[RMDB]
Notes
Structure probing data (2A3 and DMS) for a 177-nucleotide construct. DMS adducts were read by reverse transcription with MarathonRT. It was measured as part of the RMDB library OK2TST. The RNA was probed in 150 mM KOAc, 10 mM MgCl2 and 150 mM bicine (pH 8.5) at 24 C.
RNA sequence: GGGAACGACUCGAGUAGAGUCGAAAAGCCUGGUACUGGUAAAUCCCAUCUAGCCAUUGGGCUAGCUGUUUAUUAUUGUACAGCGCGCGUGGUAUAUACCGCUGCUAGCCAUGCUGCAGUUGACGCGAUCCGUGCCUUCAUUCGUGAAGGCACGGAUAAAAGAAACAACAACAACAAC
Reactivity to 2A3 in 0.01 (KOAc 150mM, MgCl2 10mM, bicine 150mM(pH8.5), 24C), signal-to-noise 1, nucleotides 027 to 126: g000c020c040u040g130g010u070a050c020u000g030g020u040a040a060a040u060c000c000c030a000u050c000u010a000g000c030c000a180u150u270g230g010g000c020u010a040g020c010u030g100u050u100u010a130u130u070a090u090u150g010u000a030c020a000g010c050g000c000g000c030g100u040g030g040u010a200u030a020u060a290c020c020g010c000u010g030c020u100a040g010c010c070a110u260g010c000u040g000c010a010g010u080u070g040a040c020g010c030g060
Reactivity to DMS in 0.01 (KOAc 150mM, MgCl2 10mM, bicine 150mM(pH8.5), 24C), signal-to-noise 1, nucleotides 027 to 126: g000c060c000u000g030g020u000a020c060u020g020g010u000a020a060a120u030c090c150c030a230u000c010u000a000g000c000c000a240u030u020g020g000g050c030u000a010g000c260u000g010u000u000u000a030u010u000a110u010u000g000u000a080c020a110g000c090g000c030g020c020g030u000g000g020u000a090u000a160u000a020c020c010g010c000u000g000c010u010a000g010c010c150a100u010g000c020u000g000c000a000g000u000u000g000a070c050g000c000g000